This 207-nucleotide RNA was probed chemically with 2A3. Conditions: 150 mM KOAc, 10 mM MgCl2 and 150 mM bicine (pH 8.5), 24 C. Reactivities are given for positions 27 through 156. It was measured as part of the RMDB library VIROID. 2A3 adducts were read by reverse transcription with SuperScript II with manganese. Reactivities are rounded to 0.1 and cut off at 0 and 3.
[RMDB]
RNA sequence: GGGAACGACUCGAGUAGAGUCGAAAAUUCAAGCGGUUGGACUCCGAGGGGAGUGUGAUCCUGCUACCGCCGUAGAAACUGGAUUACGACGUCUACCCGGGAUUCAAACUCGGCCCCUCUCAGAGGUGACUCUGAGCGAAAGGUCUGUGCAAAGCACCACACUAGGUUGCUUCGGCAACCUAGUGUGAAAAGAAACAACAACAACAAC
Reactivity to 2A3 in 0.01 (KOAc 150mM, MgCl2 10mM, bicine 150mM(pH8.5), 24C), signal-to-noise 1, nucleotides 027 to 156: u030u010c010a030a000g000c010g100g000u120u240g060g010a030c020u040c060c030g140a090g000g210g000g000a030g000u120g050u140g130a170u070c020c000u040g020c050u110a010c000c020g020c020c040g050u080a070g170a090a210a020c100u040g010g000a000u000u020a020c010g010a010c040g210u040c000u010a100c040c000c000g000g020g010a030u090u090c060a120a110a000c020u010c020g010g000c040c000c010c000u040c010u010c000a010g010a000g000g080u090g050a120c000u000c000u000g010a000g000c010g010a080a030a000g010g000u000c050u060g030u030g000c090a290a090a150g030c050a030c050